[RMDB]
RNA sequence: GGGAACGACUCGAGUAGAGUCGAAAACGACGAUCGCCGCGCCUGGGAUCCUACAGUUCGCAGUCGAGAGUCAUCAGGAAGGCGAGCCCGCACGGCGGGCCAGCGCGAUGCUGCACGCAUUGGAGGAGUGUUAAGAACCGUUCGCGGUUCUUAACACAAAAGAAACAACAACAACAAC
Reactivity to 2A3 in 0.01 (KOAc 150mM, MgCl2 10mM, bicine 150mM(pH8.5), 24C), signal-to-noise 1, nucleotides 027 to 126: c000g060a000c030g020a080u070c010g010c040c030g040c020g020c000c040u040g070g060g010a100u070c050c030u120a120c000a040g080u100u260c100g090c010a030g020u160c020g080a040g020a000g300u020c030a160u050c030a070g270g000a140a030g200g000c020g020a040g000c010c040c000g070c020a220c190g300g070c000g000g000g000c050c000a040g080c040g000c010g040a030u050g010c000u040g010c010a010c020g000c030a090u000u070g120g020a050g060g050a040
Reactivity to DMS in 0.01 (KOAc 150mM, MgCl2 10mM, bicine 150mM(pH8.5), 24C), signal-to-noise 2, nucleotides 027 to 126: c110g010a080c050g000a130u000c040g020c060c020g020c140g030c300c000u010g010g000g000a090u010c110c050u000a060c040a060g020u000u010c040g030c060a060g040u010c090g000a040g000a190g000u000c020a060u000c070a060g020g000a100a120g000g010c030g010a250g010c020c020c020g010c040a150c220g000g030c000g050g000g030c030c060a000g010c040g000c060g010a020u010g000c020u000g000c140a120c100g020c030a060u000u000g000g000a150g010g010a200
About this RNA:
An RNA of 177 nucleotides, treated with 2A3 and DMS and read out base by base. DMS adducts were read by reverse transcription with MarathonRT. Conditions: 150 mM KOAc, 10 mM MgCl2 and 150 mM bicine (pH 8.5), 24 C. Source: RMDB library OK2TRN, as collected in RNAgym. Reactivities are given for positions 27 through 126. 2A3 adducts were read by reverse transcription with SuperScript II with manganese.